RNA sequence: GGGAACGACUCGAGUAGAGUCGAAAAUGCUGGACCGCUUUUAUUGUCAUCAGAGUUGGCACCUUUUGUUCUGAAACCGGUCCGCACUGCUGCUAUGAGCAGUCGACUUCGAAGUUUACAGGAACUGAAACUCGUACAGUUUCGACUGUACGAGUUUAAAAGAAACAACAACAACAAC
Reactivity to DMS in 0.01 (KOAc 150mM, MgCl2 10mM, bicine 150mM(pH8.5), 24C), signal-to-noise 4, nucleotides 027 to 126: u010g030c010u010g010g020a060c030c020g030c180u020u020u030u000a090u010u030g020u000c020a100u020c080a060g000a100g000u010u020g020g020c100a110c110c020u000u010u000u020g020u020u000c040u000g000a010a050a000c150c020g000g010u000c000c040g010c050a070c010u010g030c000u010g020c160u020a060u080g000a010g000c010a020g000u000c060g010a040c010u000u000c060g010a060a140g010u010u020u000a060c090a130g010g000a020a080c080u000g000
Reactivity to 2A3 in 0.01 (KOAc 150mM, MgCl2 10mM, bicine 150mM(pH8.5), 24C), signal-to-noise 4, nucleotides 027 to 126: u080g000c060u190g010g020a030c000c000g090c080u150u050u060u050a170u160u160g120u070c080a050u020c040a030g020a040g120u110u080g050g030c040a130c000c000u050u060u060u120g080u090u050c010u020g010a010a010a010c030c000g000g000u000c040c000g050c040a040c000u000g000c000u000g020c020u210a110u300g140a030g000c000a000g010u010c020g000a010c000u130u120c070g060a140a060g030u000u020u060a100c050a040g070g030a070a020c000u100g030